[RMDB]
RNA sequence: GGGAACGACUCGAGUAGAGUCGAAAAGAUAUGGAAAGCGACAUGAACGAUUGUGUCGGAAACGACAUAGAGUUCAACAGCGGCUUUCCUAAGUCAAAAGCGCCCUUGCGUUCGCGCAAGGGCGCAACUAUCAACGUAUCUUCGGAUACGUUGAUAGAAAAGAAACAACAACAACAAC
Reactivity to 2A3 in 0.01 (KOAc 150mM, MgCl2 10mM, bicine 150mM(pH8.5), 24C), signal-to-noise 1, nucleotides 027 to 126: g000a000u040a000u160g020g010a000a040a020g000c060g120a160c070a190u050g000a030a000c020g160a140u140u210g020u010g000u030c000g000g040a080a080a040c020g010a010c000a000u060a010g110a020g010u000u030c010a040a040c030a030g300c080g190g000c000u000u010u010c010c000u030a110a010g030u030c030a000a000a090a080g020c030g000c000c030c000u010u010g040c140g030u070u100c300g020c000g000c120a010a000g000g000g140c010g030c010a000a000
Reactivity to DMS in 0.01 (KOAc 150mM, MgCl2 10mM, bicine 150mM(pH8.5), 24C), signal-to-noise 2, nucleotides 027 to 126: g000a040u010a300u000g000g000a010a010a010g000c010g010a090c070a170u000g020a010a020c000g010a260u020u000g010u000g010u000c000g010g010a070a060a260c000g010a010c000a000u000a030g000a300g000u000u000c000a000a040c180a090g020c050g000g000c000u000u000u000c000c000u000a020a100g010u010c040a040a030a170a140g020c030g010c000c010c010u000u020g030c000g020u000u000c300g000c050g000c000a000a000g000g000g030c020g010c000a000a020

An RNA of 177 nucleotides, treated with 2A3 and DMS and read out base by base. For DMS, 1,908 sequencing reads were counted. 2A3 adducts were read by reverse transcription with SuperScript II with manganese. The 2A3 profile rests on 1,613 reads. For DMS the reverse transcriptase was MarathonRT.